[RMDB]
Chemical mapping of a 177-nucleotide RNA with DMS and 2A3. DMS adducts were read by reverse transcription with MarathonRT. 2A3 adducts were read by reverse transcription with SuperScript II with manganese. For 2A3, 3,483 sequencing reads were counted. The DMS profile rests on 2,145 reads.

RNA sequence: GGGAACGACUCGAGUAGAGUCGAAAACUGAGGCACCCUGCCUACUCGACCCCUUCCCACGGGGACUCCACUCUGGGAACGCGACGACACGCGUGAGCGCUUGGCGACCAACGGACGACAAUUGCCGGAUUGGAACUAUGUUCGCAUAGUUCCAAUCAAAAGAAACAACAACAACAAC
Reactivity to DMS in 0.01 (KOAc 150mM, MgCl2 10mM, bicine 150mM(pH8.5), 24C), signal-to-noise 3, nucleotides 027 to 126: c070u010g000a070g000g020c150a050c040c020c010u010g020c060c010u010a040c020u000c010g000a170c030c040c020c070u000u000c000c010c010a120c200g020g000g010g030a070c050u000c030c050a070c040u010c010u000g000g010g000a100a030c050g000c060g020a080c060g000a060c150a060c020g000c020g020u000g000a100g030c030g010c040u000u020g010g010c020g010a070c050c020a050a130c060g010g010a090c040g000a090c120a050a070u000u010g010c010c050g030
Reactivity to 2A3 in 0.01 (KOAc 150mM, MgCl2 10mM, bicine 150mM(pH8.5), 24C), signal-to-noise 2, nucleotides 027 to 126: c030u030g020a080g060g010c020a040c020c010c020u020g030c010c000u050a050c020u000c020g090a130c000c010c000c000u010u000c030c000c010a040c060g000g010g010g050a040c020u010c020c010a060c020u070c050u030g020g030g030a040a030c020g030c000g070a100c040g030a010c020a030c160g010c010g030u020g060a030g000c020g000c020u040u040g040g000c020g030a080c010c020a040a030c050g020g040a030c040g020a020c060a080a160u120u140g040c020c020g050